[RMDB]
Background:
An RNA of 177 nucleotides, treated with DMS and 2A3 and read out base by base. For 2A3 the reverse transcriptase was SuperScript II with manganese. For DMS, 1,918 sequencing reads were counted. Source: RMDB library OK1LIB, as collected in RNAgym.

RNA sequence: GGGAACGACUCGAGUAGAGUCGAAAACGCCGCCAACUUCUUCACGGUGGGGGCGUGAGGGGCCAGCGAUGAGUAACGCCAACUUCUCGAUCCUGGUCGACUUCGCCGCGGGUGGGCUGGUGUUGGCGGCACCAGCCCACUUCGGUGGGCUGGUGCCAAAAGAAACAACAACAACAAC
Reactivity to DMS in 0.01 (KOAc 150mM, MgCl2 10mM, bicine 150mM(pH8.5), 24C), signal-to-noise 1, nucleotides 027 to 126: c090g000c030c000g040c020c010a040a020c000u000u040c150u030u000c210a160c190g020g010u070g010g000g030g000g100c000g020u020g000a070g020g010g000g020c000c000a010g000c160g010a000u000g000a060g040u050a080a060c110g000c180c190a060a100c090u020u000c030u000c000g010a030u020c070c000u010g010g010u000c000g000a050c020u000u020c010g040c000c010g000c100g010g060g000u010g000g000g000c090u000g000g000u000g000u000u010g000g010c000
Reactivity to 2A3 in 0.01 (KOAc 150mM, MgCl2 10mM, bicine 150mM(pH8.5), 24C), signal-to-noise 3, nucleotides 027 to 126: c040g000c020c000g000c040c020a060a020c020u140u150c010u160u160c130a060c130g060g020u160g060g010g070g000g010c030g020u080g010a020g000g050g010g010c010c000a050g000c060g110a020u010g020a000g020u070a090a050c050g070c090c020a070a070c060u110u040c030u020c030g110a050u020c000c010u020g000g000u010c020g050a140c030u070u060c010g010c010c000g040c050g010g000g080u200g010g040g000c140u090g040g050u070g000u060u020g020g020c040